[RMDB]
RNA sequence: GGGAACGACUCGAGUAGAGUCGAAAAUAAUCAAGAUGAAUCGUUUUUAGUUUGCUUGCUUACCUUAUGGGCCAGCAUGAGAUCUACUUGAAUCUUUUUAUGUAGGCAGAUAGCGACGGAAUUUAAAGGGAUAUUUAGGAUUCGUCCUAAAUAUCCCAAAAGAAACAACAACAACAAC
Reactivity to DMS in 0.01 (KOAc 150mM, MgCl2 10mM, bicine 150mM(pH8.5), 24C), signal-to-noise 4, nucleotides 027 to 126: u020a110a070u020c070a080a040g000a110u010g000a090a080u020c060g010u010u000u010u010u010a140g020u000u000u010g000c030u000u000g000c040u010u030a090c100c110u010u030a070u010g000g010g000c040c050a080g030c050a020u000g000a060g000a050u000c020u010a120c120u020u000g010a050a060u000c020u010u000u030u020u020a040u040g000u010a060g020g000c040a040g010a050u000a040g020c040g000a040c040g000g010a070a070u010u010u020a060a110a140
Reactivity to 2A3 in 0.01 (KOAc 150mM, MgCl2 10mM, bicine 150mM(pH8.5), 24C), signal-to-noise 6, nucleotides 027 to 126: u150a000a090u060c060a050a030g040a070u140g090a060a110u060c080g060u050u040u040u080u070a120g050u020u050u070g010c000u010u010g000c000u020u080a110c020c030u160u170a180u240g000g030g000c000c000a000g010c010a020u060g010a020g000a050u000c000u010a060c020u050u050g030a070a040u030c040u020u160u020u020u010a080u110g040u030a020g040g000c010a010g020a180u100a040g050c010g050a030c030g030g070a070a040u100u130u080a150a080a030